[RMDB]
RNA sequence: GGGAACGACUCGAGUAGAGUCGAAAAGAUAUGGAUAUUCUAUAAUCGUGGUCGACCGUUGAUCUCGGAAACGAGGGAGGUCACCACGGUAGAAUAUCCUAAGUCAAAAGCCCUGUUCGCAGGGCAACUCAGUAAAGACGUUCGCGUCUUUACUGAGAAAAGAAACAACAACAACAAC
Reactivity to 2A3 in 0.01 (KOAc 150mM, MgCl2 10mM, bicine 150mM(pH8.5), 24C), signal-to-noise 3, nucleotides 027 to 126: g030a040u060a040u160g010g000a000u010a000u000u020c020u040a150u150a300a300u250c000g010u000g030g020u100c250g000a000c000c000g120u190u010g000a010u020c000u010c000g040g000a080a080a070c000g000a000g030g030g000a010g000g010u000c000a000c000c010a000c000g010g000u000a000g010a000a010u000a000u020c000c000u000a050a020g070u030c020a020a020a040a220g010c010c000c000u010g000u030u120c300g000c020a000g030g000g020c000a000a040
Reactivity to DMS in 0.01 (KOAc 150mM, MgCl2 10mM, bicine 150mM(pH8.5), 24C), signal-to-noise 2, nucleotides 027 to 126: g000a030u000a300u010g010g000a000u000a000u000u000c000u000a090u020a270a080u010c010g010u000g010g040u000c110g060a010c010c000g030u010u000g020a020u010c000u010c020g000g000a100a040a200c020g000a000g000g000g010a010g010g000u000c000a010c000c000a000c000g000g000u000a000g000a010a010u010a000u000c000c010u000a000a070g020u000c050a070a050a120a170g000c000c000c000u000g010u000u000c170g030c000a010g000g000g020c010a000a000